[RMDB]
RNA sequence: GGGAACGACUCGAGUAGAGUCGAAAACUGCCCUGGGUUUUCGCUGUCUUACAGAUAGACUGUGCCUAAUUAGUUCGUCUCUUAAUCGGAUGGAAGUUGUGAAAUUUGUAAGGGCGGAUAACUAACGCGAUAAGUUAAGUUUCGACUUAAUUUAUCGAAAAGAAACAACAACAACAAC
Reactivity to 2A3 in 0.01 (KOAc 150mM, MgCl2 10mM, bicine 150mM(pH8.5), 24C), signal-to-noise 7, nucleotides 027 to 126: c070u100g030c000c000c000u030g030g000g000u010u000u000u010c010g000c010u060g140u240c010u040u060a030c010a020g030a070u060a020g050a020c030u060g070u130g090c000c000u040a070a050u060u090a040g050u030u040c020g020u000c050u000c000u110u140a110a080u090c040g010g020a030u060g030g040a040a050g020u030u010g040u030g080a120a130a060u050u040u010g010u020a000a000g000g000g000c010g000g010a020u060a040a020c010u000a040a000c070g010
Reactivity to DMS in 0.01 (KOAc 150mM, MgCl2 10mM, bicine 150mM(pH8.5), 24C), signal-to-noise 7, nucleotides 027 to 126: c130u020g000c000c000c010u020g010g000g010u000u000u000u000c010g020c010u010g020u030c060u010u010a070c060a040g000a040u000a060g010a070c030u010g030u010g000c040c020u010a060a090u030u020a080g010u010u010c030g010u000c020u030c050u010u020a090a080u020c130g000g000a060u010g010g020a070a090g000u000u000g000u010g010a090a150a070u000u000u000g000u010a040a020g000g000g000c010g000g000a040u030a020a050c040u010a050a100c210g010